[RMDB]
RNA sequence: GGGAACGACUCGAGUAGAGUCGAAAAGCGAUCUUUCGAGAUCGCACCACGGGGUCUUCAAUCGAUGAGGGACAUGAUCUGAAGCCUCCACGGAUCAACAGCCUACCCACCAUCGGAUGAAGACGGAGGCACCCAGCGCGCCUAGUUCGCUAGGCAAUACAAGAAAGGAUUUCGAUCCUUUCUUGUAAAAAGAAACAACAACAACAAC
Reactivity to 2A3 in 0.01 (KOAc 150mM, MgCl2 10mM, bicine 150mM(pH8.5), 24C), signal-to-noise 6, nucleotides 027 to 156: g000c000g000a000u000c010u050u180u150c230g070a030g000a020u000c010g000c000a020c010c020a030c040g120g020g030g010u000c000u010u000c010a050a160u030c010g000a010u050g070a300g050g020g020a020c030a100u080g000a000u000c010u010g030a090a010g000c000c000u020c010c000a020c020g000g000a000u030c000a010a120c030a120g100c020c040u180a160c070c030c070a190c130c030a040u010c000g030g000a030u020g010a010a000g010a000c000g000g000a000g000g020c000a020c000c020c010a060g090c100g030c040g000c070c000u010a020g020u090u100c150g020c130u000a000g020g000c000a010a010
Reactivity to DMS in 0.01 (KOAc 150mM, MgCl2 10mM, bicine 150mM(pH8.5), 24C), signal-to-noise 2, nucleotides 027 to 156: g020c010g000a010u010c000u020u010u010c240g010a020g000a020u000c000g030c000a020c050c020a170c060g030g020g060g030u010c020u000u000c020a030a080u000c020g020a060u000g020a170g020g000g000a180c080a300u000g000a010u000c030u000g030a070a120g010c040c020u000c010c050a300c050g000g000a020u030c010a040a160c080a200g020c030c020u000a300c050c060c110a200c060c030a050u000c000g000g030a090u000g000a040a050g020a020c000g020g020a010g050g030c030a170c030c000c030a280g010c060g030c050g000c000c020u010a020g000u000u000c260g020c000u020a000g020g030c000a090a200